[RMDB]
RNA sequence: GGGAACGACUCGAGUAGAGUCGAAAACGGAGGGGCUGAUAUUCAGCUACUUAAGGAGCCAACACAUUGUGCUGGGGUGUCUCUAUCAUCCUACGAUCACAGAGCUGCUUCCAAGCUUAGAGAAGUAAUUGCAGAAGCUAUUCGUAGCUUCUGCAAUAAAAGAAACAACAACAACAAC
Reactivity to 2A3 in 0.01 (KOAc 150mM, MgCl2 10mM, bicine 150mM(pH8.5), 24C), signal-to-noise 2, nucleotides 027 to 126: c030g010g000a020g010g030g010g000c010u000g020a040u050a140u300u190c020a000g000c000u060a080c010u120u040a120a070g080g030a010g060c040c060a090a010c070a020c010a090u080u150g030u030g000c050u010g020g030g010g010u020g050u000c020u040c010u150a140u200c000a030u050c010c010u040a050c100g030a080u130c000a010c010a070g100a020g050c020u070g000c010u080u030c020c010a080a060g010c030u100u170a030g020a010g000a100a020g000u050a050
Reactivity to DMS in 0.01 (KOAc 150mM, MgCl2 10mM, bicine 150mM(pH8.5), 24C), signal-to-noise 4, nucleotides 027 to 126: c090g000g050a060g010g000g020g010c020u000g010a090u020a160u000u000c030a020g010c000u000a030c020u000u000a120a130g020g010a090g020c010c020a070a080c100a090c100a180u010u010g030u010g010c050u000g020g000g010g030u000g010u000c080u010c100u010a060u010c040a030u000c010c020u000a040c160g010a070u000c070a060c070a070g000a120g000c030u000g010c030u000u010c060c020a070a050g000c100u000u000a030g020a100g000a080a040g010u020a040
Description: Structure probing data (2A3 and DMS) for a 177-nucleotide construct. 2A3 adducts were read by reverse transcription with SuperScript II with manganese. DMS adducts were read by reverse transcription with MarathonRT.